[RMDB]
RNA sequence: GGGAACGACUCGAGUAGAGUCGAAAACAGUUUAGCUUGUAGGUCUUAUUGCAAGCUUUUCAUUCAAUUCAUUUUGACCUCCAUGGGUUACCCAAUAGACCUCAUCUUCAAAUCCAUUUACAUGAAAGAGCAUCGCACGAUUCGUCGUGCGAUGCUCAAAAGAAACAACAACAACAAC
Reactivity to 2A3 in 0.01 (KOAc 150mM, MgCl2 10mM, bicine 150mM(pH8.5), 24C), signal-to-noise 1, nucleotides 027 to 126: c000a020g000u000u000u000a000g000c000u020u000g010u000a000g040g110u220c230u250u220a170u020u230g000c000a000a000g050c000u010u000u000u050c000a000u110u000c000a100a070u000u000c020a130u060u030u150u240g000a000c000c000u000c000c010a080u220g000g000g000u000u110a160c020c020c000a010a010u120a110g050a000c000c000u040c020a080u050c000u050u070c000a020a120a120u000c050c000a070u000u030u260a040c000a040u250g050a080a110a090
This 177-nucleotide RNA was probed chemically with 2A3. It was measured as part of the RMDB library OK1LIB. The reactions ran in a buffer of 150 mM KOAc, 10 mM MgCl2 and 150 mM bicine (pH 8.5), at 24 C.